[RMDB]
RNA sequence: GGGAACGACUCGAGUAGAGUCGAAAACGGCGGCUCGAGUGGUGGCCGAUAUUAUUGAGUCUAAAGGGUCCGUAGCCGGCUUUGCAAGUCCCCUGGGAAAUCCAGCGGCUUAACCGUUGGGCUUUCAAGGAUAUAACAUUUUCGAAUGUUAUAUCCUAAAAGAAACAACAACAACAAC
Reactivity to DMS in 0.01 (KOAc 150mM, MgCl2 10mM, bicine 150mM(pH8.5), 24C), signal-to-noise 6, nucleotides 027 to 126: c060g000g010c040g020g000c010u000c030g010a070g010u010g000g020u010g010g020c020c030g010a060u020a030u020u020a080u010u020g010a090g010u000c040u020a080a150a170g020g010g010u020c030c040g010u020a080g020c130c000g010g010c030u000u000u010g010c080a090a120g000u000c020c010c000c090u010g020g000g000a020a040a040u010c010c000a000g000c010g000g000c130u030u040a100a170c020c000g000u010u000g000g000g000c080u000u000u000c030a110
Reactivity to 2A3 in 0.01 (KOAc 150mM, MgCl2 10mM, bicine 150mM(pH8.5), 24C), signal-to-noise 8, nucleotides 027 to 126: c010g030g000c020g010g010c010u020c030g040a060g050u110g040g040u070g040g040c010c020g020a020u020a060u130u070a100u060u140g060a050g050u010c040u120a120a080a090g070g010g000u030c050c030g030u040a010g040c020c000g000g010c000u080u070u100g030c020a050a010g030u060c000c010c000c020u060g040g000g050a030a050a010u030c000c000a000g000c000g020g000c030u130u110a060a070c000c000g010u000u010g010g010g010c020u010u030u030c040a040
Source information:
This 177-nucleotide RNA was probed chemically with DMS and 2A3. As a SHAPE reagent, 2A3 marks flexible, mostly unpaired nucleotides at the ribose 2'-OH. The data come from the RNA Mapping Database (RMDB), libraries RFM100 and RFMREP.